[RMDB]
RNA sequence: GGGAACGACUCGAGUAGAGUCGAAAAAGUUUUGCCUGUUAGGUGAGGCUCCUAUGCAAACACAGGCCACUGCCCAAAAAUGUCCAAAUACGCCAAUGGGUAGAACAGGGAUUGUCGGAUUAAGGCUAAAACAGCCCAUGCUUCGGCAUGGGCUGAACAACAUAAAGUAGUUCGCUACUUUAUGUUGAAAAGAAACAACAACAACAAC
Reactivity to DMS in 0.01 (KOAc 150mM, MgCl2 10mM, bicine 150mM(pH8.5), 24C), signal-to-noise 2, nucleotides 027 to 156: a100g000u010u000u000u000g020c010c020u000g030u000u010a090g040g010u010g010a080g020g010c020u000c060c020u000a080u000g030c030a140a100a110c080a080c030a070g020g000c000c030a070c060u000g000c010c000c020a020a060a030a110a120u010g010u000c040c040a090a050a150u000a110c050g020c020c050a050a120u000g020g000g030u000a050g010a060a090c060a060g010g020g000a070u010u000g000u000c030g020g000a120u010u000a020a050g000g000c020u000a030a040a060a130c050a010g000c010c000c010a030u010g020c020u000u000c300g040g000c000a010u000g000g000g000c000u000g010a020a040
Reactivity to 2A3 in 0.01 (KOAc 150mM, MgCl2 10mM, bicine 150mM(pH8.5), 24C), signal-to-noise 2, nucleotides 027 to 156: a000g020u040u040u050u090g020c010c010u050g060u090u100a050g000g060u040g070a070g070g000c020u040c020c000u110a070u160g040c040a050a140a060c020a010c010a050g010g000c000c010a020c010u040g000c000c000c000a010a000a060a010a010u080g030u040c040c020a070a020a090u130a060c050g000c020c020a010a060u040g010g000g020u040a010g020a030a020c040a030g020g010g030a040u050u070g070u120c020g030g000a010u110u110a060a030g010g020c050u010a030a030a020a040c020a000g000c000c000c000a000u000g000c000u040u080c200g090g000c010a010u040g030g000g040c000u000g000a000a000
Structure probing data (DMS and 2A3) for a 207-nucleotide construct. The DMS profile rests on 4,858 reads. DMS adducts were read by reverse transcription with MarathonRT. The 2A3 profile rests on 1,830 reads.